[RMDB]
RNA sequence: GGGAACGACUCGAGUAGAGUCGAAAACAUGGUACUGCGUUAGAAUCCAUUCUCUUUCCUUGAGGUUUGGAUGAGGAGCGUCUAUUUAGGGAAGUAACGGAAGACGUAGUUCAUCUCUCUAACGUUAGGGUUAUUCUAACUUCGGUUAGAAUAACCCAAAAGAAACAACAACAACAAC
Reactivity to 2A3 in 0.01 (KOAc 150mM, MgCl2 10mM, bicine 150mM(pH8.5), 24C), signal-to-noise 3, nucleotides 027 to 126: c060a020u080g050g000u150a010c020u010g000c000g010u010u010a020g120a040a080u000c010c000a000u070u000c120u000c000u030u060u040c000c020u050u060g020a010g010g040u120u100u070g020g020a040u040g030a080g050g030a070g050c020g030u000c000u030a170u030u110u020a050g050g000g030a010a020g040u070a060a020c010g000g020a010a000g010a000c000g000u010a000g030u040u020c030a090u010c010u000c000u000c000u030a070a080c050g040u060u090a100
Reactivity to DMS in 0.01 (KOAc 150mM, MgCl2 10mM, bicine 150mM(pH8.5), 24C), signal-to-noise 2, nucleotides 027 to 126: c100a030u010g020g000u060a020c080u000g000c080g000u010u000a060g000a160a080u000c000c000a010u000u000c090u030c000u000u000u030c000c110u000u040g000a010g010g000u000u010u050g000g020a090u000g030a100g010g000a160g000c010g000u010c020u020a130u000u020u000a080g000g050g020a010a080g050u000a150a100c100g000g020a090a060g000a000c030g040u000a010g000u000u010c050a050u020c020u030c060u010c000u010a030a090c120g030u000u010a070

Conditions: 150 mM KOAc, 10 mM MgCl2 and 150 mM bicine (pH 8.5), 24 C. This 177-nucleotide RNA was probed chemically with 2A3 and DMS. Values cover nucleotides 27 to 126. For DMS the reverse transcriptase was MarathonRT.